[RMDB]
RNA sequence: GGGAACGACUCGAGUAGAGUCGAAAAUUAUGUGAAAAUACAAAAAGAAUAAAUGUCCUGCAGGUGAAUGGGGCUGUAGCAAUCUUAUUUAGGAUGAAAGUCUGAUUGGCCCUUAUUAGGAUGAUUACUACUUCCAUAUGUUCGCAUAUGGAAGUAGAAAAGAAACAACAACAACAAC
Reactivity to 2A3 in 0.01 (KOAc 150mM, MgCl2 10mM, bicine 150mM(pH8.5), 24C), signal-to-noise 2, nucleotides 027 to 126: u070u020a110u110g040u030g060a150a000a010a130u190a080c040a030a160a010a040a050g180a040a060u120a100a080a030u100g010u000c010c000u000g050c060a040g210g070u170g060a040a030u010g000g000g000g010c010u000g000u050a000g000c020a060a000u020c000u020u100a120u110u230u100a110g000g010a000u030g060a100a050a080g020u050c020u030g070a110u090u070g030g000c000c000c000u020u020a020u010u050a010g010g000a020u060g000a010u090u070a080
Reactivity to DMS in 0.01 (KOAc 150mM, MgCl2 10mM, bicine 150mM(pH8.5), 24C), signal-to-noise 3, nucleotides 027 to 126: u010u020a060u010g020u010g000a080a060a100a110u030a070c050a060a050a050a120a130g010a110a100u000a040a080a120u000g010u010c020c020u010g010c200a050g030g030u010g000a050a060u000g000g020g000g030c040u000g020u000a050g010c100a070a030u000c020u000u010a110u000u010u000a090g000g020a020u000g000a080a070a110g000u000c020u000g000a060u010u010g010g010c010c010c040u000u000a050u000u010a030g000g000a060u010g000a100u000u000a150